Structure probing data (DMS and 2A3) for a 177-nucleotide construct.
For 2A3 the reverse transcriptase was SuperScript II with manganese.
The data come from the RNA Mapping Database (RMDB), library OK1LIB.
RNA sequence: GGGAACGACUCGAGUAGAGUCGAAAAGGUGGUUACGCAUUCGACGAUUUCCUUCUACGUUUGCUGAUUGGAACAGUUAGGUAGUUUUCGUCGUUCCUAGUUUUUUCUAGGUUUGCGUUUUCACCGAGGGUUUUGGCUACUUCGGUAGCCAGGACCCAAAAGAAACAACAACAACAAC
Reactivity to DMS in 0.01 (KOAc 150mM, MgCl2 10mM, bicine 150mM(pH8.5), 24C), signal-to-noise 6, nucleotides 027 to 126: g000g020u000g010g010u000u010a010c010g010c010a060u020u020c000g010a010c010g010a030u010u020u010c210c080u020u020c020u000a030c060g000u030u010u010g010c040u020g010a190u040u040g000g010a050a060c010a030g010u020u000a020g000g010u010a030g010u020u000u010u000c010g010u000c000g010u050u040c000c000u000a010g010u000u030u030u030u040u010c010u000a010g000g000u060u010u010g010c010g010u000u000u000u010c010a000c000c010g010a120
Reactivity to 2A3 in 0.01 (KOAc 150mM, MgCl2 10mM, bicine 150mM(pH8.5), 24C), signal-to-noise 9, nucleotides 027 to 126: g000g000u000g000g020u020u010a000c000g010c010a030u080u120c010g000a000c000g000a010u020u030u080c050c000u040u050c030u010a030c030g090u030u080u100g200c060u080g070a300u210u290g100g050a110a040c020a030g030u130u070a030g010g070u030a010g020u020u000u020u020c000g000u000c000g030u060u050c000c000u000a010g000u010u130u090u030u060u060c000u000a000g000g000u020u070u050g000c000g000u000u000u000u020c000a000c000c000g000a100
For DMS, 42,821 sequencing reads were counted. The reactions ran in a buffer of 150 mM KOAc, 10 mM MgCl2 and 150 mM bicine (pH 8.5), at 24 C.